[RMDB]
RNA sequence: GGGAACGACUCGAGUAGAGUCGAAAAUUUCUUGAACUGGACUGGUUUGUGCGUGAAGAACAUCAAUCAUCCCAGUUCAGGGGGCGCUUUCUUUAUUUCGACACGCCGCUACCCGCCGGGGGCAUCGACCUUGAAAUUUGUUCGCAAAUUUCAAGGUAAAAGAAACAACAACAACAAC
Reactivity to DMS in 0.01 (KOAc 150mM, MgCl2 10mM, bicine 150mM(pH8.5), 24C), signal-to-noise 1, nucleotides 027 to 126: u000u000u030c000u020u000g010a050a000c000u000g000g000a170c080u000g010g000u010u010u010g020u000g020c170g040u010g060a130a280g010a170a120c010a000u020c150a000a020u010c010a000u000c040c030c000a010g010u000u000c020a010g000g030g000g000g000c090g000c200u040u060u000c000u000u010u030a080u050u000u020c030g000a110c120a070c080g000c000c000g020c020u030a090c090c060c020g000c030c030g000g000g010g010g070c070a050u010c080g000
Reactivity to 2A3 in 0.01 (KOAc 150mM, MgCl2 10mM, bicine 150mM(pH8.5), 24C), signal-to-noise 3, nucleotides 027 to 126: u040u030u010c010u030u040g050a040a010c000u000g010g030a020c030u010g000g030u010u000u040g020u030g010c060g040u040g100a070a120g080a160a020c020a020u160c040a000a060u010c010a000u020c000c000c000a000g000u000u000c000a000g010g010g000g000g000c040g060c060u070u120u020c030u010u300u130a190u050u110u100c060g010a010c010a030c070g030c010c030g020c040u070a110c000c010c000g000c010c010g010g000g000g020g000c010a040u100c070g050

An RNA of 177 nucleotides, treated with DMS and 2A3 and read out base by base. Reactivities are rounded to 0.1 and cut off at 0 and 3. It was measured as part of the RMDB library RFM100. The reactions ran in a buffer of 150 mM KOAc, 10 mM MgCl2 and 150 mM bicine (pH 8.5), at 24 C.